[RMDB]
An RNA of 207 nucleotides, treated with 2A3 and DMS and read out base by base. Source: RMDB library OK3TST, as collected in RNAgym. Conditions: 150 mM KOAc, 10 mM MgCl2 and 150 mM bicine (pH 8.5), 24 C. The 2A3 profile rests on 7,418 reads. For 2A3 the reverse transcriptase was SuperScript II with manganese.
RNA sequence: GGGAACGACUCGAGUAGAGUCGAAAACAACACCUAAGAAUGCCAACAAACACACCUGGAAGAAAACUGCAGGCAAGGGAGAUGUGACAACUUUCUAUGGUGCUAGAAGUAGUUCAGCUAACUUUGGUGAUAGUGAUCUCGUUGCCAAUGGUAACGCACUGAUUUGGUAAUUCGUUACCAAAUCAGUAAAAGAAACAACAACAACAAC
Reactivity to 2A3 in 0.01 (KOAc 150mM, MgCl2 10mM, bicine 150mM(pH8.5), 24C), signal-to-noise 7, nucleotides 027 to 156: c030a010a020c010a010c030c010u070a050a040g030a070a040u110g030c020c030a060a020c030a060a190a030c070a010c010a010c050c020u050g040g000a050a010g030a040a130a030a020c060u090g010c030a040g050g030c050a030a060g050g030g010a030g010a040u070g030u050g070a060c040a090a050c070u020u090u040c020u040a080u130g010g010u020g030c030u040a030g030a100a020g050u120a010g010u050u100c060a020g020c030u040a020a080c010u050u050u100g020g000u030g040a070u060a060g080u060g060a060u030c030u010c080g020u020u020g000c010c000a100a100u200g020g000u030a040a000c030g000c030
Reactivity to DMS in 0.01 (KOAc 150mM, MgCl2 10mM, bicine 150mM(pH8.5), 24C), signal-to-noise 3, nucleotides 027 to 156: c040a100a080c030a060c010c000u020a110a070g010a050a110u000g020c010c020a050a140c020a080a130a130c070a130c030a050c000c010u000g000g020a070a100g020a120a050a140a110c050u000g010c050a050g000g030c040a070a070g030g030g010a060g030a110u000g000u010g010a080c080a040a090c040u000u000u000c050u000a080u000g010g040u000g010c020u000a100g010a080a090g010u000a080g010u000u000c050a100g000c020u010a060a100c040u000u000u000g000g020u020g000a080u000a030g010u000g010a110u000c040u000c040g030u000u000g000c000c050a060a110u000g000g000u010a050a080c040g000c110